[RMDB]
RNA sequence: GGGAACGACUCGAGUAGAGUCGAAAACGGGGUGCGUAACAUUGCCAGACUUAAGGCUUGCUCUUCAGUGGCAUAUUCAUGGUCUAGCUCACCAGAGAUAGCGCCCUCACGCAUCACCACAAUACGACAGUACCACCAGGUUCGCCUGGUGGUACUGAAAAGAAACAACAACAACAAC
Reactivity to DMS in 0.01 (KOAc 150mM, MgCl2 10mM, bicine 150mM(pH8.5), 24C), signal-to-noise 3, nucleotides 027 to 126: c180g020g000g020g030u000g020c040g010u000a110a090c230a060u010u000g010c000c030a110g000a200c070u010u000a070a080g000g000c030u010u010g010c100u000c070u000u000c110a000g000u000g000g030c010a050u000a030u000u010c230a120u000g040g020u010c020u000a070g000c080u010c190a070c110c120a130g010a080g010a010u010a040g020c180g030c010c010c100u000c090a050c020g020c000a020u010c020a080c010c000a080c190a080a120u010a100c110g010a220
Reactivity to 2A3 in 0.01 (KOAc 150mM, MgCl2 10mM, bicine 150mM(pH8.5), 24C), signal-to-noise 2, nucleotides 027 to 126: c030g000g020g010g000u020g020c020g010u000a060a070c020a140u010u110g000c000c000a010g060a080c000u010u010a010a000g010g020c010u080u150g030c030u050c000u090u020c020a020g010u010g020g000c010a030u040a040u140u110c050a060u170g040g000u010c030u050a010g040c020u040c050a150c100c050a010g030a000g000a020u040a030g040c070g040c000c030c000u010c010a020c000g000c000a030u020c030a100c150c030a030c030a040a100u240a110c090g040a020